[RMDB]
RNA sequence: GGGAACGACUCGAGUAGAGUCGAAAAGAUAUGGAGCAUGUGGUAAGGGAUUGAUGACCUCGGAAACGAGCAAGAUCUUUACGUAACAUCAUGCUCCUAAGUCAAAAGGGAAAGUUCGCUUUCCCAAGACCCAAAUUGAGUUCGCUCAAUUUGGGUCAAAAGAAACAACAACAACAAC
Reactivity to 2A3 in 0.01 (KOAc 150mM, MgCl2 10mM, bicine 150mM(pH8.5), 24C), signal-to-noise 3, nucleotides 027 to 126: g020a000u070a000u110g000g000a000g000c020a000u010g000u050g070g040u060a060a140g100g050g000a030u030u060g130a190u180g090a090c010c020u000c000g000g030a050a050a040c000g010a000g020c020a080a070g040a090u030c020u020u060u070a050c080g060u120a060a070c050a180u220c000a000u020g000c030u010c000c010u010a020a010g050u040c030a000a000a070a100g000g000g030a050a020a000g030u080u170c260g040c200u000u000u000c030c000c000a010a000
Reactivity to DMS in 0.01 (KOAc 150mM, MgCl2 10mM, bicine 150mM(pH8.5), 24C), signal-to-noise 2, nucleotides 027 to 126: g020a020u000a300u000g010g000a020g000c000a010u000g010u000g010g010u000a030a040g000g030g000a040u000u000g000a070u030g010a150c300c000u000c010g000g000a080a100a140c020g000a020g050c030a070a100g000a020u000c000u000u010u010a010c010g010u000a100a100c200a030u030c000a010u000g000c000u010c000c000u010a000a070g010u000c040a090a060a120a130g000g000g000a020a000a010g010u010u000c220g010c000u000u000u000c010c000c000a040a060

Structure probing data (2A3 and DMS) for a 177-nucleotide construct.
The reactions ran in a buffer of 150 mM KOAc, 10 mM MgCl2 and 150 mM bicine (pH 8.5), at 24 C.
For DMS the reverse transcriptase was MarathonRT.